[RMDB]
Structure probing data (DMS and 2A3) for a 177-nucleotide construct. The 2A3 profile rests on 2,197 reads. Reactivities are given for positions 27 through 126. It was measured as part of the RMDB library M2PK90. Conditions: 150 mM KOAc, 10 mM MgCl2 and 150 mM bicine (pH 8.5), 24 C.

RNA sequence: GGGAACGACUCGAGUAGAGUCGAAAAUUAAAGUACGUAGAAGCGGCGUGAACCAUGUAGAAAGCUUUGCGAGCAUAUCGAGCUACAUGUGAGCGAAAGCGGUUACGUACAACGAUAUGCAAAAAAAGUAAAUGACAGUGUUCGCACUGUCAUUUACAAAAGAAACAACAACAACAAC
Reactivity to DMS in 0.01 (KOAc 150mM, MgCl2 10mM, bicine 150mM(pH8.5), 24C), signal-to-noise 2, nucleotides 027 to 126: u000u010a040a140a130g000u020a000c000g000u000a010g000a040a060g010c020g010g030c110g010u000g000a130a180c300c010a000u000g010u000a010g000a060a060a120g000c070u000u000u000g010c170g010a140g000c010a050u000a010u010c030g000a100g000c000u000a020c020a010u000g000u000g020a230g000c050g010a020a110a150g010c000g000g010u000u000a010c000g000u000a000c030a010a050c080g000a010u000a020u000g000c020a000a000a060a070a060a060a110
Reactivity to 2A3 in 0.01 (KOAc 150mM, MgCl2 10mM, bicine 150mM(pH8.5), 24C), signal-to-noise 2, nucleotides 027 to 126: u060u020a090a000a010g010u000a000c000g010u000a010g000a110a010g130c060g150g000c020g030u030g000a010a040c040c020a010u010g000u000a020g060a130a100a000g030c040u050u110u220g090c160g070a040g030c040a030u040a020u170c060g020a020g040c000u000a000c020a000u000g020u050g030a000g000c030g070a130a030a020g010c010g010g000u040u020a010c010g010u000a000c020a000a000c000g020a020u090a020u250g020c050a000a040a040a040a010a000a090